[RMDB]
RNA sequence: GGGAACGACUCGAGUAGAGUCGAAAAGAGGUGGCGCUUGACGAUCUGCUACUCACCGUCUCAAUCCUAAGCGGAAUUGACGUGGAAGAGCUCGAAAAUGAAGCCGGAAUUGAUGAGAUCGUAGACUACAUCGUCCAUGUAUACGAGCACAACAAUACGAAUACGCCACAUUCGUGUGGCGUAUUCGAAAAGAAACAACAACAACAAC
Reactivity to 2A3 in 0.01 (KOAc 150mM, MgCl2 10mM, bicine 150mM(pH8.5), 24C), signal-to-noise 2, nucleotides 027 to 156: g160a040g040g060u070g020g050c050g000c080u050u040g020a010c030g010a020u000c000u100g050c020u020a060c020u060c010a040c050c000g060u000c000u000c020a040a080u050c020c000u080a210a040g020c030g010g040a050a070u020u030g020a020c000g040u160g050g010a180a110g000a000g030c050u060c070g130a100a060a010a030u060g040a040a020g020c020c010g050g010a040a120u080u130g050a060u050g020a050g000a050u040c030g040u030a020g050a080c000u060a030c060a050u050c060g090u020c010c030a100u120g030u010a080u010a150c050g020a000g000c000a000c020a110a020c000a050a100u180a110